Source: RMDB library TTRDES, as collected in RNAgym. The record gives the reactivity of an RNA of 177 nucleotides to DMS and 2A3. Values are in units of 0.01, from 0 to 300, in steps of 10. For DMS the reverse transcriptase was MarathonRT. Values cover nucleotides 27 to 126.
[RMDB]
RNA sequence: GGGAACGACUCGAGUAGAGUCGAAAAGAUAUGGAGGAUGUGGAGGGAGACGGGGUGUCGGAAACGACAUGCACGUCGAGGAUCUCCACCGCUCCUCCUAAGUCAAACGGAGAGUUCGCUCUCCGAACUAAGCACUCUACUUCGGUAGAGUGCUUAGAAAAGAAACAACAACAACAAC
Reactivity to DMS in 0.01 (KOAc 150mM, MgCl2 10mM, bicine 150mM(pH8.5), 24C), signal-to-noise 2, nucleotides 027 to 126: g000a050u000a300u010g000g000a010g040g000a140u000g010u000g010g000a050g000g000g020a020g020a000c000g000g000g010g070u000g000u000c000g000g000a060a080a230c020g000a020c000a000u000g000c000a070c010g020u000c000g000a120g000g000a030u020c000u000c000c010a010c020c300g000c140u010c040c000u000c020c010u000a010a130g010u000c040a120a100a270c040g000g000a020g000a020g030u010u000c300g010c030u000c010u000c000c010g010a060a120
Reactivity to 2A3 in 0.01 (KOAc 150mM, MgCl2 10mM, bicine 150mM(pH8.5), 24C), signal-to-noise 1, nucleotides 027 to 126: g010a020u070a050u160g010g000a000g030g020a030u300g040u020g010g020a010g000g000g010a020g000a010c000g050g000g020g020u020g000u030c010g040g000a050a060a050c020g010a000c020a030u120g220c180a160c190g000u000c010g040a250g010g010a000u000c000u010c010c000a000c000c020g030c050u000c000c000u000c030c000u000a060a010g070u010c050a160a030a060c010g000g000a000g000a000g020u100u280c300g060c220u010c000u000c010c010g000a040a000